[RMDB]
RNA sequence: GGGAACGACUCGAGUAGAGUCGAAAAGGGGAUAUCAAGGGCAGUCCUCAACAUGUUUCCAGAUGCCAAGCUUGUGUUCAACAGUCUUUUAGAGGUGAAUGACCUGAUGGCUUCCGGAACACAUCCACGGGUAUGCAAGCUUCGGCUUGCAUACCCGAAAAGAAACAACAACAACAAC
Reactivity to 2A3 in 0.01 (KOAc 150mM, MgCl2 10mM, bicine 150mM(pH8.5), 24C), signal-to-noise 2, nucleotides 027 to 126: g020g050g010g000a010u020a040u240c110a000a090g000g010g010c050a000g060u000c000c000u090c000a010a000c090a070u180g020u000u070u000c000c000a000g080a060u020g000c000c000a000a070g000c030u030u000g000u050g030u050u090c030a030a050c030a170g080u030c010u000u300u160u280a060g040a050g000g010u050g120a230a120u240g110a140c000c000u030g000a020u000g020g060c010u100u010c040c040g060g030a010a000c070a000c020a050u080c050c000a030
Structure probing data (2A3) for a 177-nucleotide construct. The reactions ran in a buffer of 150 mM KOAc, 10 mM MgCl2 and 150 mM bicine (pH 8.5), at 24 C. The 2A3 profile rests on 722 reads. It was measured as part of the RMDB library OK1LIB. For 2A3 the reverse transcriptase was SuperScript II with manganese. Values cover nucleotides 27 to 126.